[RMDB]
This 177-nucleotide RNA was probed chemically with DMS and 2A3. For DMS the reverse transcriptase was MarathonRT. Conditions: 150 mM KOAc, 10 mM MgCl2 and 150 mM bicine (pH 8.5), 24 C. The 2A3 profile rests on 2,764 reads. High 2A3 reactivity points to a flexible backbone, as in loops and unpaired stretches.
RNA sequence: GGGAACGACUCGAGUAGAGUCGAAAACAUCCACUGCUACGGCAGUGGAUGAACGAGGUAGGUACGCCUACCUCGAAAGAGGGAUGUUUUCAUAGACAUUAAACGUCCAUGGUACGCCAUGGACGAACACGAUAGUCACGUUCGCGUGACUAUCGUGAAAAGAAACAACAACAACAAC
Reactivity to DMS in 0.01 (KOAc 150mM, MgCl2 10mM, bicine 150mM(pH8.5), 24C), signal-to-noise 2, nucleotides 027 to 126: c020a020u000c000c000a000c000u000g010c020u010a110c190g080g000c000a000g010u000g000g010a000u000g000a030a070c020g060a010g000g000u000a000g000g000u010a080c300g050c000c000u000a010c000c000u000c000g010a010a120a050g000a100g040g010g000a050u030g000u020u000u000u010c190a130u010a130g020a000c070a030u000u000a100a210a200c030g030u000c000c000a010u000g000g010u000a080c290g000c020c000a000u000g010g000a000c000g030a030a070
Reactivity to 2A3 in 0.01 (KOAc 150mM, MgCl2 10mM, bicine 150mM(pH8.5), 24C), signal-to-noise 2, nucleotides 027 to 126: c010a000u020c000c010a000c000u000g000c000u020a060c220g190g000c000a010g000u000g000g010a000u000g000a010a010c000g010a000g000g020u000a000g000g010u020a020c210g090c000c000u000a000c010c000u000c010g000a020a020a010g130a060g030g120g030a030u020g050u010u060u020u120c140a140u170a080g030a050c020a020u010u210a100a120a020c010g000u000c000c000a010u000g000g000u050a050c250g020c030c010a000u000g010g000a000c000g000a000a000